[RMDB]
RNA sequence: GGGAACGACUCGAGUAGAGUCGAAAAAUGCUUACUAACUGUGGCAAUGUUAAGCUGUGAAACUUGCUAAUAUGCAUUCCAUGUUAAACUGUGAAUGUUUACAUUGUACUUGAAUAUCCUGACUGCACUUUUAAUCGGAGUUCGCUCCGAUUAAAAGAAAAGAAACAACAACAACAAC
Reactivity to DMS in 0.01 (KOAc 150mM, MgCl2 10mM, bicine 150mM(pH8.5), 24C), signal-to-noise 4, nucleotides 027 to 126: a080u000g000c050u000u000a070c120u000a090a090c130u000g010u010g010g020c010a070a030u000g010u000u010a060a100g020c020u010g010u000g010a090a060a060c100u000u000g010c030u000a050a110u020a060u010g010c020a030u000u000c040c020a020u000g020u000u000a050a070a170c130u000g000u000g030a090a070u010g020u000u000u010a030c030a040u000u000g010u000a060c100u000u010g000a060a090u000a080u000c000c030u000g010a110c100u000g010c150a170
Reactivity to 2A3 in 0.01 (KOAc 150mM, MgCl2 10mM, bicine 150mM(pH8.5), 24C), signal-to-noise 2, nucleotides 027 to 126: a000u070g020c020u100u090a090c060u090a190a090c090u080g030u060g100g000c020a010a010u040g010u050u050a050a020g010c040u030g030u070g280a190a080a050c050u100u060g020c010u020a070a070u050a100u250g020c000a010u020u000c000c010a000u010g030u070u210a130a180a080c040u050g050u090g130a030a010u040g000u020u070u040a000c010a020u020u050g010u030a080c040u030u050g060a070a030u090a060u130c010c010u040g060a080c050u070g040c040a060